This 177-nucleotide RNA was probed chemically with 2A3 and DMS.
For DMS the reverse transcriptase was MarathonRT.
It was measured as part of the RMDB libraries RFM100 and RFMREP.
The reactions ran in a buffer of 150 mM KOAc, 10 mM MgCl2 and 150 mM bicine (pH 8.5), at 24 C.
2A3 is a SHAPE reagent: it acylates the 2'-hydroxyl of flexible nucleotides of all four kinds.
RNA sequence: GGGAACGACUCGAGUAGAGUCGAAAAGAGCCCUAAUGUACUAGUCUAUAAGACUAGGUACAAUGGAACAUACUACGUUCAACCAUCAUUUGAUGUUCAAGAGAGUGAAGGAUAUGGGUCUCCUACAUCGACAAGCCUGAUUCGUCAGGCUUGUCGAAAAAGAAACAACAACAACAAC
Reactivity to 2A3 in 0.01 (KOAc 150mM, MgCl2 10mM, bicine 150mM(pH8.5), 24C), signal-to-noise 2, nucleotides 027 to 126: g050a000g030c000c010c000u020a070a010u040g000u000a000c010u000a000g000u010c000u000a260u140a300a050g000a000c000u000a030g000g040u000a000c020a020a020u090g100g010a000a030c030a010u290a120c040u110a040c160g000u000u000c010a020a020c000c000a000u010c040a060u030u010u100g070a090u030g080u240u230c050a090a000g060a000g020a020g050u000g020a070a030g020g000a010u030a020u190g000g000g010u020c000u010c000c000u000a010c020a060
Reactivity to DMS in 0.01 (KOAc 150mM, MgCl2 10mM, bicine 150mM(pH8.5), 24C), signal-to-noise 2, nucleotides 027 to 126: g000a100g010c020c000c010u000a060a030u000g000u010a000c000u000a000g000u000c000u000a200u030a090a070g010a020c000u000a010g030g040u000a000c000a010a150u030g040g010a000a030c000a170u090a160c170u060a140c170g000u000u000c030a110a130c060c020a080u000c000a080u040u000u000g000a250u000g000u030u020c290a080a050g000a300g000a000g020u000g000a030a070g000g000a050u010a030u040g000g000g000u000c000u000c000c020u000a070c290a040